RNA sequence: GGGAACGACUCGAGUAGAGUCGAAAAAGGAUGAGGAGCUAUAUGCUCUAACAGGUGGGCCGUGUGUCAUGUCUGAGUCCGAGCUCUCUCUCGCCUCUGCAGACCCUGCCCACGCUCCUCCCCGGCGGCCAGGGGACUCCUGCAGUAGUCCUGCUUACUGCGUAAAUACGUUCGCGUAUUUACGCAGAAAAGAAACAACAACAACAAC
Reactivity to 2A3 in 0.01 (KOAc 150mM, MgCl2 10mM, bicine 150mM(pH8.5), 24C), signal-to-noise 1, nucleotides 027 to 156: a000g080g000a020u120g000a020g000g020a000g040c040u100a070u010a050u300g000c000u000c010u000a050a000c010a090g180g040u010g000g000g020c000c020g070u050g060u050g000u000c140a280u070g060u050c200u020g000a000g010u010c070c000g010a000g020c070u070c020u020c000u000c000u000c230g000c000c020u010c010u020g030c000a010g060a000c000c000c020u000g020c000c000c000a040c050g000c000u010c000c030u010c020c030c000c000g030g040c030g010g070c080c090a110g010g000g000g020a020c010u010c000c050u030g000c000a020g000u070a000g070u120c030c010u000g000c000u020u040a060

Chemical mapping of a 207-nucleotide RNA with 2A3. Source: RMDB library OK3TST, as collected in RNAgym. 2A3 adducts were read by reverse transcription with SuperScript II with manganese.